The record gives the reactivity of an RNA of 177 nucleotides to 2A3 and DMS. Values cover nucleotides 27 to 126. High DMS reactivity at an A or C suggests that its Watson-Crick edge is free. The data come from the RNA Mapping Database (RMDB), library RFM100.
RNA sequence: GGGAACGACUCGAGUAGAGUCGAAAAGGGCGAAUGGAAGCGAAAAGUCGACCCCAAGCUGAAAAGCGAAGGGUCGAGUUGUUGAAAAAUGACCUGAGAGCAUGAGGCGAGACCCGUAGCGCAGGGCCCUGAUGCAUGUUUUCGAACAUGCAUCAGGAAAAGAAACAACAACAACAAC
Reactivity to 2A3 in 0.01 (KOAc 150mM, MgCl2 10mM, bicine 150mM(pH8.5), 24C), signal-to-noise 2, nucleotides 027 to 126: g030g040g000c040g020a030a070u100g050g060a060a020g040c020g100a160a030a040a020g100u030c000g010a010c000c000c000c010a020a000g000c000u030g020a060a050a020a000g020c020g040a050a000g000g000g000u000c000g000a000g010u000u000g000u000u010g020a040a050a000a050a070u090g070a070c010c010u020g020a040g000a010g080c010a040u070g030a010g040g000c060g000a070g060a230c000c030c000g010u030a010g000c050g000c030a000g000g000g010c000
Reactivity to DMS in 0.01 (KOAc 150mM, MgCl2 10mM, bicine 150mM(pH8.5), 24C), signal-to-noise 2, nucleotides 027 to 126: g000g020g000c020g010a070a060u000g020g040a060a110g000c060g020a070a070a040a080g030u000c020g040a040c020c010c010c000a040a300g010c000u030g000a110a040a090a030g060c000g000a300a210g000g000g000u000c000g000a000g000u000u000g010u000u000g000a020a000a040a070a040u050g000a090c000c020u040g000a020g020a160g000c070a010u040g010a090g050g000c020g000a150g000a110c030c000c030g020u000a090g000c030g000c010a090g000g000g000c010